[RMDB]
RNA sequence: GGGAACGACUCGAGUAGAGUCGAAAAUAUGUCAUUUGGUGUGCGUACAUCAGGUGGCACAACUUUCUCUAUGUCGCCACAUAGUGGAAGUGAACUCAGUGCUCUACGCAGAGUUCUGAGUGACCUUUGCUACUGUAGCGACAGUGGUAAAGAAGUACUCAUUAGCACGUUUCGACGUGCUAAUGAGAAAAGAAACAACAACAACAAC
Reactivity to DMS in 0.01 (KOAc 150mM, MgCl2 10mM, bicine 150mM(pH8.5), 24C), signal-to-noise 1, nucleotides 027 to 156: u020a050u010g010u000c010a030u000u000u000g000g000u000g040u030g030c300g000u000a050c000a010u000c010a020g000g010u000g000g030c000a000c060a030a110c020u000u000u000c030u000c000u040a080u020g010u000c030g030c030c040a110c000a030u010a040g040u000g020g020a020a030g010u000g000a250a080c000u000c000a000g020u020g040c000u000c010u000a210c300g010c230a070g000a050g020u000u000c010u020g020a020g020u000g010a150c300c010u000u000u000g030c000u010a000c040u000g040u000a070g000c090g010a070c000a000g000u000g030g030u010a020a070a010g010a010a090g000u000a100
Reactivity to 2A3 in 0.01 (KOAc 150mM, MgCl2 10mM, bicine 150mM(pH8.5), 24C), signal-to-noise 4, nucleotides 027 to 156: u290a050u040g010u000c000a020u000u010u020g030g030u020g000u070g200c300g090u290a010c000a000u000c000a000g000g020u000g000g020c020a000c010a030a060c020u040u080u030c020u000c010u040a050u070g000u000c010g000c020c000a010c010a010u010a000g000u040g180g030a000a020g030u020g070a010a010c000u000c010a010g010u010g030c000u000c010u050a130c260g110c300a040g000a000g010u020u020c000u000g000a000g010u010g010a040c000c000u000u000u010g000c000u000a040c120u020g010u000a020g010c010g010a010c000a000g010u040g030g020u150a110a070a030g050a080a020g060u040a030

This 207-nucleotide RNA was probed chemically with DMS and 2A3. Source: RMDB library OK3TST, as collected in RNAgym. Reactivities are given for positions 27 through 156. The reactions ran in a buffer of 150 mM KOAc, 10 mM MgCl2 and 150 mM bicine (pH 8.5), at 24 C.